[RMDB]
RNA sequence: GGGAACGACUCGAGUAGAGUCGAAAAAGCUCGUAUGCCUGGUUUAGGGUUCCAGGCUAGCCCUAUCUAUCGGUCGAGAUGCGAGCGCUUAAGCUCAAAUUGAGUGGCUGAGUUAGUGGUGAACGUACUAAUUGCUAAAUUUCGAUUUAGCAAUUAGAAAAGAAACAACAACAACAAC
Reactivity to DMS in 0.01 (KOAc 150mM, MgCl2 10mM, bicine 150mM(pH8.5), 24C), signal-to-noise 9, nucleotides 027 to 126: a100g010c040u000c020g020u020a070u020g000c000c000u000g000g000u010u010u030a130g020g010g010u010u010c000c010a010g000g000c000u000a090g010c000c000c000u000a010u000c030u030a100u010c010g010g020u000c010g010a300g000a010u000g000c300g000a010g010c000g010c200u040u040a100a130g010c000u000c000a030a300a040u000u000g000a140g050u040g010g000c000u000g000a020g000u000u000a010g010u030g010g020u000g000a080a050c210g000u020a140
Reactivity to 2A3 in 0.01 (KOAc 150mM, MgCl2 10mM, bicine 150mM(pH8.5), 24C), signal-to-noise 9, nucleotides 027 to 126: a000g060c050u080c100g100u110a060u160g010c000c000u020g010g040u040u080u160a150g050g030g020u050u020c000c000a000g010g000c000u000a000g000c000c000c000u000a020u010c020u030a140u070c010g020g010u010c020g020a010g000a110u010g010c000g000a000g000c010g010c050u130u190a110a030g000c000u000c000a030a050a070u040u060g030a060g050u240g060g000c010u010g010a000g010u000u020a040g000u090g170g010u020g030a050a020c030g010u030a050